[RMDB]
RNA sequence: GGGAACGACUCGAGUAGAGUCGAAAACAGUGAGACACUCUGUCUCAGUGUCUCUCUGAGUGUCUCACACACAGACAGAGUGACUGACACAGAGACACACAGUGACUCACUGACUGUGUCAGUCUGAAGCACGUCCUAACUUCGGUUAGGACGUGCUAAAAGAAACAACAACAACAAC
Reactivity to DMS in 0.01 (KOAc 150mM, MgCl2 10mM, bicine 150mM(pH8.5), 24C), signal-to-noise 2, nucleotides 027 to 126: c080a070g040u030g000a020g050a070c000a020c000u000c040u000g040u010c070u000c080a110g020u000g000u020c000u000c090u010c090u000g000a010g000u000g040u000c000u000c030a070c130a060c280a140c220a090g020a110c080a070g040a150g030u000g000a010c050u000g000a020c010a010c010a000g000a000g000a020c030a030c070a230c120a090g010u000g000a140c180u000c060a060c000u000g000a070c070u000g010u020g000u000c020a040g000u000c000u010g000a120
Reactivity to 2A3 in 0.01 (KOAc 150mM, MgCl2 10mM, bicine 150mM(pH8.5), 24C), signal-to-noise 1, nucleotides 027 to 126: c010a020g010u000g010a010g020a010c000a000c000u010c010u070g100u110c030u040c130a040g000u000g000u000c020u060c020u000c040u060g020a000g070u020g010u010c000u070c020a000c020a000c000a000c010a000g290a020c020a010g200a020g240u120g020a030c030u000g000a000c000a000c000a010g000a020g040a030c010a010c010a010c000a040g060u060g140a260c030u050c200a030c040u010g010a000c020u030g010u000g040u060c020a000g040u000c000u020g000a020
Chemical mapping of a 177-nucleotide RNA with DMS and 2A3.
It was measured as part of the RMDB library OK2TRN.
The RNA was probed in 150 mM KOAc, 10 mM MgCl2 and 150 mM bicine (pH 8.5) at 24 C.